[RMDB]
RNA sequence: GGGAACGACUCGAGUAGAGUCGAAAACUGGACAUCCCGAAUGCGGCCUUCAUGCGCAUAUCGGAUGCACCCCUGAUAUCAGCGGCCACAUGCACAGUGAGUGAGUGCAUCUACUCAGCAGAUUACGACCGCUGUACAUAUUCGUAUGUACAGCGGUAAAAGAAACAACAACAACAAC
Reactivity to 2A3 in 0.01 (KOAc 150mM, MgCl2 10mM, bicine 150mM(pH8.5), 24C), signal-to-noise 4, nucleotides 027 to 126: c060u070g060g050a000c000a020u050c010c010c040g020a000a020u020g020c030g090g150c080c120u250u210c160a130u290g010c020g000c030a000u050a280u010c000g010g000a000u020g000c000a120c000c000c000c030u050g050a060u030a040u180c040a020g030c010g050g000c030c010a030c010a020u030g000c020a020c000a020g050u050g140a060g040u090g040a020g010u040g030c000a020u000c020u040a040c020u030c020a040g010c030a010g040a190u090u130a050c060g030
Reactivity to DMS in 0.01 (KOAc 150mM, MgCl2 10mM, bicine 150mM(pH8.5), 24C), signal-to-noise 4, nucleotides 027 to 126: c040u000g010g000a180c070a060u000c080c010c080g030a050a040u010g000c000g020g030c080c130u000u000c220a130u010g010c040g010c030a010u000a080u000c050g000g000a060u010g010c040a200c040c020c030c040u000g010a070u010a060u000c050a090g020c070g010g000c020c030a060c120a060u000g010c050a040c060a070g000u020g010a090g000u010g010a090g020u000g010c040a080u000c040u000a040c030u000c000a160g000c080a070g010a130u000u000a080c140g010
Background
An RNA of 177 nucleotides, treated with 2A3 and DMS and read out base by base. For 2A3 the reverse transcriptase was SuperScript II with manganese. The reactions ran in a buffer of 150 mM KOAc, 10 mM MgCl2 and 150 mM bicine (pH 8.5), at 24 C.